[RMDB]
RNA sequence: GGGAACGACUCGAGUAGAGUCGAAAACAGUAUGGCAAUUUUAAAGAUUUGACGAAGUAUAAAGGUGGAGAUAUUUCAUAUAAUCCAGAAGCCCCGAUUUAUUCAGCAAAAUAUCAACUAACCAAUGAGCUUCAGGUUAUUUCGAUAACCUGAAGCUAAAAGAAACAACAACAACAAC
Reactivity to 2A3 in 0.01 (KOAc 150mM, MgCl2 10mM, bicine 150mM(pH8.5), 24C), signal-to-noise 1, nucleotides 027 to 126: c000a000g150u100a000u070g040g000c030a030a010u000u040u000u160a210a170a000g000a000u000u070u080g040a040c050g030a010a000g100u040a000u150a280a280a030g170g000u000g000g040a140g000a000u000a030u020u060u040c000a000u090a000u000a240a010u230c000c000a030g030a180a000g000c000c000c000c000g000a000u040u040u050a100u000u040c040a000g030c070a030a050a100a000u050a070u030c060a080a010c080u090a000a000c030c010a040a010u250g080
This 177-nucleotide RNA was probed chemically with 2A3. The data come from the RNA Mapping Database (RMDB), library OK1LIB. The reactions ran in a buffer of 150 mM KOAc, 10 mM MgCl2 and 150 mM bicine (pH 8.5), at 24 C.